Structure probing data (2A3 and DMS) for a 177-nucleotide construct.
RNA sequence: GGGAACGACUCGAGUAGAGUCGAAAAUAUUCUGGGAACAAGGGGGUUUGUGCAAGGCCAUACAGGAGCAAUGUUGCUUCCUCAACAUCAGUAACACUCAUGUAUCCGUCCUCCAGGAACGGCCCCCACGGAGUAGUCAGUUCGCUGACUACUCCGUAAAAGAAACAACAACAACAAC
Reactivity to 2A3 in 0.01 (KOAc 150mM, MgCl2 10mM, bicine 150mM(pH8.5), 24C), signal-to-noise 2, nucleotides 027 to 126: u250a060u080u030c010u070g010g090g010a150a150c070a100a020g000g050g070g020g000u100u080u230g000u090g060c080a070a010g000g030c040c000a020u010a000c000a000g080g010a000g040c070a120a080u040g000u000u030g000c000u070u100c060c020u140c040a160a070c030a050u060c080a000g030u070a000a000c020a000c030u010c000a050u000g000u020a010u090c040c000g040u040c000c020u030c000c000a030g000g150a020a000c000g000g000c000c000c000c000c000
Reactivity to DMS in 0.01 (KOAc 150mM, MgCl2 10mM, bicine 150mM(pH8.5), 24C), signal-to-noise 1, nucleotides 027 to 126: u040a130u040u000c020u000g000g050g000a030a020c170a110a100g000g000g000g000g000u000u000u050g020u040g080c150a060a110g000g000c160c200a000u000a020c040a080g000g000a020g050c140a000a130u000g000u000u010g020c000u000u020c070c040u000c130a000a060c270a040u010c100a050g000u030a050a170c070a040c050u000c000a050u020g020u000a000u000c140c170g010u100c000c000u000c170c120a170g000g030a060a060c060g030g000c000c000c000c000c000
Notes:
The RNA was probed in 150 mM KOAc, 10 mM MgCl2 and 150 mM bicine (pH 8.5) at 24 C. It was measured as part of the RMDB library OK1LIB.